Chemical mapping of a 177-nucleotide RNA with 2A3 and DMS.
DMS (dimethyl sulfate) methylates the pairing face of unpaired adenines and cytosines.
Values cover nucleotides 27 to 126.
The RNA was probed in 150 mM KOAc, 10 mM MgCl2 and 150 mM bicine (pH 8.5) at 24 C.
RNA sequence: GGGAACGACUCGAGUAGAGUCGAAAAGAAAUGUUGCAAUUAUUCAAUAAACUGAUUCAAUGGAAUCCAGCAUAUACGUUUGAUAACGCAAUUAACUUAGUAUCUGCUUGUCAACAACUAUUAUUAACACCACUCUACCAUUCGUGGUAGAGUGGUGAAAAGAAACAACAACAACAAC
Reactivity to 2A3 in 0.01 (KOAc 150mM, MgCl2 10mM, bicine 150mM(pH8.5), 24C), signal-to-noise 2, nucleotides 027 to 126: g030a000a090a070u060g000u030u020g000c010a040a080u140u050a070u080u230c010a020a110u100a080a090a040c020u010g000a020u030u020c090a170a170u190g270g030a000a010u000c060c000a000g000c000a020u040a000u020a170c080g060u060u060u000g030a020u040a030a030c080g010c040a000a010u100u050a010a040c050u030u040a030g050u090a090u030c020u010g040c040u030u040g040u060c020a010a000c010a000a010c120u050a020u260u050a080u080u090a190a000
Reactivity to DMS in 0.01 (KOAc 150mM, MgCl2 10mM, bicine 150mM(pH8.5), 24C), signal-to-noise 2, nucleotides 027 to 126: g020a140a190a070u000g020u000u000g010c030a090a120u000u000a090u000u020c050a010a080u000a070a100a090c080u000g010a040u010u000c020a260a120u010g020g020a020a020u000c110c120a050g000c070a050u000a090u000a040c080g010u000u020u000g020a030u000a060a090c250g020c070a020a100u010u000a130a110c060u000u000a020g020u000a100u000c150u000g020c050u000u000g020u000c060a010a000c090a050a020c070u000a070u020u020a110u000u000a030a220